[RMDB]
RNA sequence: GGGAACGACUCGAGUAGAGUCGAAAAACUCUGAUAAUACAUUAAUUAAGUGUAAGGGAUGGAACACAAGAGUGAUAGCAACACUACAGUGAAUUGCAUGAUUUGUGGCACUUAAUGCGUAGUAGUGCGCUAGGAAAUGGUUCGCCAUUUCCUAGCGAAAAGAAACAACAACAACAAC
Reactivity to 2A3 in 0.01 (KOAc 150mM, MgCl2 10mM, bicine 150mM(pH8.5), 24C), signal-to-noise 1, nucleotides 027 to 126: a030c030u000c020u040g080a030u100a300a070u090a040c000a000u130u240a250a040u050u040a070a090g000u010g020u040a100a140g100g000g000a030u110g090g000a080a000c000a010c010a080a030g030a050g100u060g040a070u030a030g000c010a030a020c000a000c040u110a060c030a030g000u020g070a120a150u070u050g020c010a010u050g070a200u090u150u120g040u060g080g000c010a020c050u000u020a020a000u060g050c060g070u040a030g010u010a030g060u060g060
Reactivity to DMS in 0.01 (KOAc 150mM, MgCl2 10mM, bicine 150mM(pH8.5), 24C), signal-to-noise 2, nucleotides 027 to 126: a040c030u010c010u000g020a170u000a140a100u000a060c020a060u010u010a130a060u000u000a040a070g020u000g000u020a150a080g000g000g040a090u000g010g000a090a170c060a040c040a030a130g000a090g040u000g010a090u000a130g000c100a070a070c040a010c030u010a060c100a160g020u000g020a050a120u010u000g000c020a030u000g000a110u010u010u000g020u000g000g000c020a030c040u000u000a030a030u010g020c100g020u020a030g020u010a060g020u000g020

Notes:
Structure probing data (2A3 and DMS) for a 177-nucleotide construct. For DMS, 1,297 sequencing reads were counted. The 2A3 profile rests on 1,021 reads. The data come from the RNA Mapping Database (RMDB), library OK2TST. Values cover nucleotides 27 to 126.